The record gives the reactivity of an RNA of 177 nucleotides to 2A3 and DMS.
It was measured as part of the RMDB library OK2TRN.
For DMS the reverse transcriptase was MarathonRT.
For DMS, 10,374 sequencing reads were counted.

RNA sequence: GGGAACGACUCGAGUAGAGUCGAAAAUCUAAAUCAAUCAGGUUUAUGCGAAGAGCACUUUCUUGCAGGUCGAAACAUGCGAUACUAGCGUCACAUGCCUUAUUAAGGAGCUAUAAAAGGUGGCGAAGCAUAGCCCUUAAUUCGUUAAGGGCUAUGCAAAAGAAACAACAACAACAAC
Reactivity to 2A3 in 0.01 (KOAc 150mM, MgCl2 10mM, bicine 150mM(pH8.5), 24C), signal-to-noise 6, nucleotides 027 to 126: u020c000u030a030a000a050u110c070a020a030u100c040a040g060g000u040u060u100a050u090g040c040g040a090a020g030a080g090c030a010c050u080u100u060c020u010u060g000c030a030g020g020u060c040g070a070a070a070c060a050u160g030c010g020a020u050a150c050u070a050g100c000g010u020c010a020c010a040u110g020c000c010u140u120a190u110u050a130a040g060g000a080g020c030u050a040u090a180a110a010a000g150g020u010g010g000c010g020a040a000
Reactivity to DMS in 0.01 (KOAc 150mM, MgCl2 10mM, bicine 150mM(pH8.5), 24C), signal-to-noise 8, nucleotides 027 to 126: u000c030u010a060a100a130u010c130a090a120u020c130a060g010g010u010u000u000a070u010g010c050g010a090a080g010a170g020c030a070c140u000u000u000c030u000u000g020c100a020g000g010u000c050g010a100a070a090c170a070u000g010c040g010a050u000a060c080u010a070g010c040g020u000c020a030c030a090u010g000c020c030u000u000a110u000u010a050a060g010g000a120g010c080u000a090u000a040a050a060a090g010g010u000g010g010c020g000a070a100